The data come from the RNA Mapping Database (RMDB), libraries RFM100 and RFMREP.
An RNA of 177 nucleotides, treated with 2A3 and DMS and read out base by base.
Values cover nucleotides 27 to 126.
The RNA was probed in 150 mM KOAc, 10 mM MgCl2 and 150 mM bicine (pH 8.5) at 24 C.
2A3 adducts were read by reverse transcription with SuperScript II with manganese.
[RMDB]
RNA sequence: GGGAACGACUCGAGUAGAGUCGAAAAUAAACCCUGAUUGAGUUCAGCCCACAUACUUUGUUGAUUGGUUGUCAAUCAUGGCAAAAGUGCACGCUACUUUGAUAACCUUUUACAUGCGACACAGACGAUCAUAAGUGCGUUUCGACGCACUUAUGAUAAAAGAAACAACAACAACAAC
Reactivity to 2A3 in 0.01 (KOAc 150mM, MgCl2 10mM, bicine 150mM(pH8.5), 24C), signal-to-noise 3, nucleotides 027 to 126: u140a020a110a000c000c000c000u050g050a050u060u030g050a080g280u050u070c030a030g020c000c080c000a050c020a030u100a090c130u050u110u060g090u170u150g020a250u020u020g100g010u070u020g050u030c000a040a030u020c030a070u100g010g000c040a030a080a080a060g110u070g080c060a040c200g000c000u050a040c050u130u020u020g040a040u090a060a050c000c000u000u000u010u130a030c030a050u140g000c000g100a010c020a000c030a120g080a070c100g020
Reactivity to DMS in 0.01 (KOAc 150mM, MgCl2 10mM, bicine 150mM(pH8.5), 24C), signal-to-noise 4, nucleotides 027 to 126: u010a090a150a090c060c010c010u020g000a050u000u010g030a120g010u000u010c050a080g040c000c030c000a140c190a100u040a090c110u040u000u010g000u010u010g010a050u000u000g010g020u000u000g000u020c020a040a050u010c130a120u010g000g000c030a060a070a050a080g050u020g000c170a110c170g000c010u000a040c140u000u000u000g000a070u010a030a020c030c030u000u000u020u010a020c070a030u020g010c080g000a080c150a020c060a060g000a080c230g010